[RMDB]
RNA sequence: GGGAACGACUCGAGUAGAGUCGAAAAAGUUAGGUUCGCUAUGGUGAAACUCUUUAAGGCAAUAACGAACUAAUUCUAAGCAAGUAAUGGAGAAAUGCCAGGGUCACUAUCUAGCCAUAAUAGUGCUGUAAGUGACUUAGAUUCGUCUAAGUCACAACCCAGGGGAGGGAUUCGUCCCUCCCCUGGGAAAAGAAACAACAACAACAAC
Reactivity to 2A3 in 0.01 (KOAc 150mM, MgCl2 10mM, bicine 150mM(pH8.5), 24C), signal-to-noise 2, nucleotides 027 to 156: a000g060u050u000a000g000g050u050u000c030g040c000u000a060u110g040g010u050g010a210a160a150c030u050c010u070u110u190a090a020g010g030c020a080a120u070a210a010c070g000a040a000c020u040a020a020u160u100c020u190a130a040g080c020a060a000g030u070a080a120u100g030g000a080g010a000a060a020u080g040c030c030a030g000g000g000u020c000a000c020u000a010u130c020u030a000g040c000c000a020u040a130a060u050a110g030u030g030c080u070g030u000a110a030g000u000g000a000c010u000u000a000g010a000u070u000c050g000u000c260u000a000a000g000u000c000a010c000a020a010